Overview
An RNA of 177 nucleotides, treated with DMS and 2A3 and read out base by base. Reactivities are rounded to 0.1 and cut off at 0 and 3. The data come from the RNA Mapping Database (RMDB), library OK2TST. DMS adducts were read by reverse transcription with MarathonRT.

[RMDB]
RNA sequence: GGGAACGACUCGAGUAGAGUCGAAAAGCCACUGCGCCCAAAAACGAUAUACACCAGUGGAACGAGCUGUGCAUCGAAGAGCCAUUCGAUCAGACGAAUACAGCUCGAUCGGUGUAUGAUACGGAUAAUCGUACUAGGGGUUCGCCCCUAGUACGAUAAAAGAAACAACAACAACAAC
Reactivity to DMS in 0.01 (KOAc 150mM, MgCl2 10mM, bicine 150mM(pH8.5), 24C), signal-to-noise 2, nucleotides 027 to 126: g020c040c080a090c080u000g000c140g060c000c000c030a060a040a120a130a130c070g000a130u000a020u050a010c000a040c020c000a160g030u020g000g020a170a280c000g000a010g010c000u000g020u000g030c160a040u010c000g000a010a060g020a080g010c270c150a110u000u000c000g000a060u000c110a210g000a220c130g020a070a130u000a070c010a000g000c010u000c000g000a010u000c090g070g020u000g000u000a000u000g000a100u000a110c020g010g010a070u000a130
Reactivity to 2A3 in 0.01 (KOAc 150mM, MgCl2 10mM, bicine 150mM(pH8.5), 24C), signal-to-noise 1, nucleotides 027 to 126: g020c000c010a100c040u070g050c070g040c040c000c000a070a010a000a060a030c000g000a000u000a000u020a140c030a000c030c000a100g050u080g190g020a050a040c000g000a000g010c000u020g010u030g070c040a000u000c000g020a000a000g050a070g210c080c040a070u020u030c010g020a010u070c030a030g100a130c070g040a000a030u170a130c010a000g010c020u000c000g000a020u060c070g000g030u010g000u000a010u000g020a030u130a090c030g000g000a000u080a090